[RMDB]
RNA sequence: GGGAACGACUCGAGUAGAGUCGAAAAUGAAGGUCUCCUAUCGAGGACAUUUUCUGCAUAACAUUUACCCCUGUGCCUUUAUAGAUUCUCCUGAAUUUAGAUCAACUCAGAUGCACAAAGGUGAAAAGCGGACGAUGUCUUUCGAGACAUCGUCCGCAAAAGAAACAACAACAACAAC
Reactivity to 2A3 in 0.01 (KOAc 150mM, MgCl2 10mM, bicine 150mM(pH8.5), 24C), signal-to-noise 1, nucleotides 027 to 126: u100g150a150a030g160g000u000c000u000c060c000u100a070u130c130g040a000g000g000a000c000a090u000u110u060u030c070u040g090c120a120u060a230a050c090a090u250u000u220a040c000c000c000c000u060g000u000g000c000c020u230u010u020a180u100a100g000a000u000u160c000u000c010c010u010g000a010a070u180u300u170a040g000a040u000c030a000a000c030u070c120a000g000a000u000g000c000a000c000a000a150a000g100g000u040g000a130a000a000a000
Structure probing data (2A3) for a 177-nucleotide construct.
Reactivities are given for positions 27 through 126.
For 2A3 the reverse transcriptase was SuperScript II with manganese.
The reactions ran in a buffer of 150 mM KOAc, 10 mM MgCl2 and 150 mM bicine (pH 8.5), at 24 C.